[RMDB]
RNA sequence: GGGAACGACUCGAGUAGAGUCGAAAAGGAGUUAAGUUCGCUUAACUCCCACUACCGAGAAUGCGACUCGGUAUUUCGCAAUAACCCUUGGAAACAAGGGAACCACUGACGACUUCGGUCGUCAGAACAGUACUUCCUGGUUCGCCAGGAAGUACUGAAAAGAAACAACAACAACAAC
Reactivity to DMS in 0.01 (KOAc 150mM, MgCl2 10mM, bicine 150mM(pH8.5), 24C), signal-to-noise 3, nucleotides 027 to 126: g000g020a020g010u000u000a000a020g000u010u030c250g020c020u000u000a010a010c000u000c000c000c030a040c130u000a030c010c000g020a020g000a130a120u010g030c230g010a110c010u000c000g000g010u000a000u000u000u000c000g030c050a150a120u020a110a090c010c010c010u000u000g010g010a140a100a210c010a010a000g000g010g000a050a060c210c180a110c000u000g000a020c000g000a010c000u000u000c210g000g010u000c000g010u010c000a010g000a040a060
Reactivity to 2A3 in 0.01 (KOAc 150mM, MgCl2 10mM, bicine 150mM(pH8.5), 24C), signal-to-noise 3, nucleotides 027 to 126: g000g020a010g000u000u010a030a000g010u020u100c170g020c100u010u000a000a000c000u020c000c000c000a040c010u020a010c010c010g010a000g030a140a170u300g110c150g110a080c020u000c000g020g030u000a010u010u030u010c070g000c070a060a150u140a190a220c010c000c000u000u010g050g020a030a050a020c000a000a000g000g000g000a010a010c020c020a050c010u010g010a010c010g000a000c000u030u080c240g090g000u000c000g000u010c000a000g010a000a000

An RNA of 177 nucleotides, treated with DMS and 2A3 and read out base by base. High DMS reactivity at an A or C suggests that its Watson-Crick edge is free. The reactions ran in a buffer of 150 mM KOAc, 10 mM MgCl2 and 150 mM bicine (pH 8.5), at 24 C. Reactivities are given for positions 27 through 126. 2A3 adducts were read by reverse transcription with SuperScript II with manganese.